[RMDB]
RNA sequence: GGGAACGACUCGAGUAGAGUCGAAAAGAUAUGGAGAUCGAAUCUAGCAACAGCUACGGGUUCGGAAACGAACCGUAGACAUGCUACUCGAUCUCCUAAGUCAAAGGUACACGUUCGCGUGUACCAACCUGCUCUGUGAGUUCGCUCACAGAGCAGGAAAAGAAACAACAACAACAAC
Reactivity to 2A3 in 0.01 (KOAc 150mM, MgCl2 10mM, bicine 150mM(pH8.5), 24C), signal-to-noise 1, nucleotides 027 to 126: g060a020u080a020u100g000g000a000g020a000u020c010g010a050a010u080c210u240a040g000c080a080a100c120a290g110c010u030a020c050g220g230g190u070u000c000g000g020a030a000a000c000g010a000a020c000c020g000u000a020g040a000c000a120u300g000c000u010a020c000u000c000g020a000u040c010u000c000c010u000a000a000g000u000c050a000a240a000g030g040u030a000c000a010c040g070u120u150c300g040c070g250u000g000u000a000c000c000a010a010

Conditions: 150 mM KOAc, 10 mM MgCl2 and 150 mM bicine (pH 8.5), 24 C.
The record gives the reactivity of an RNA of 177 nucleotides to 2A3.
Reactivities are given for positions 27 through 126.